[RMDB]
Description
An RNA of 177 nucleotides, treated with DMS and 2A3 and read out base by base.
RNA sequence: GGGAACGACUCGAGUAGAGUCGAAAAGUGACUUACCUGUAUGGAGGCAAGGGCUCGAAGAGGGAUCCCAGGGUAAACCUACUCGAGCGAGGCGGAGAUCGAGCGCCAGUUCGUGCGCGGCGACCUGCAGGAGAUAGUUGUUCGCAACUAUCUCCUGAAAAGAAACAACAACAACAAC
Reactivity to DMS in 0.01 (KOAc 150mM, MgCl2 10mM, bicine 150mM(pH8.5), 24C), signal-to-noise 2, nucleotides 027 to 126: g020u000g000a160c030u000u000a080c030c010u000g010u010a110u010g000g000a050g000g030c040a060a080g010g000g030c040u010c060g020a030a110g010a060g020g000g000a140u010c050c010c030a110g000g000g000u000a070a090a070c050c010u000a060c020u000c040g010a050g040c070g030a070g010g050c020g000g000a050g000a090u010c020g030a230g000c030g000c020c050a130g000u020u000c150g000u020g020c040g000c000g030g030c010g000a080c040c010u000g000
Reactivity to 2A3 in 0.01 (KOAc 150mM, MgCl2 10mM, bicine 150mM(pH8.5), 24C), signal-to-noise 1, nucleotides 027 to 126: g010u050g050a080c050u050u100a090c040c010u130g080u110a180u210g000g000a020g010g010c140a070a090g030g040g010c020u040c030g200a130a070g020a040g080g030g020a050u050c000c000c010a010g120g020g000u080a130a060a040c030c020u050a020c000u000c000g000a000g030c000g040a080g000g080c040g030g030a050g000a130u080c080g020a000g040c050g000c020c030a070g120u140u060c070g030u110g040c000g000c000g160g010c000g000a030c010c010u050g000

For 2A3, 682 sequencing reads were counted. The reactions ran in a buffer of 150 mM KOAc, 10 mM MgCl2 and 150 mM bicine (pH 8.5), at 24 C. The DMS profile rests on 1,240 reads. It was measured as part of the RMDB library VIROID.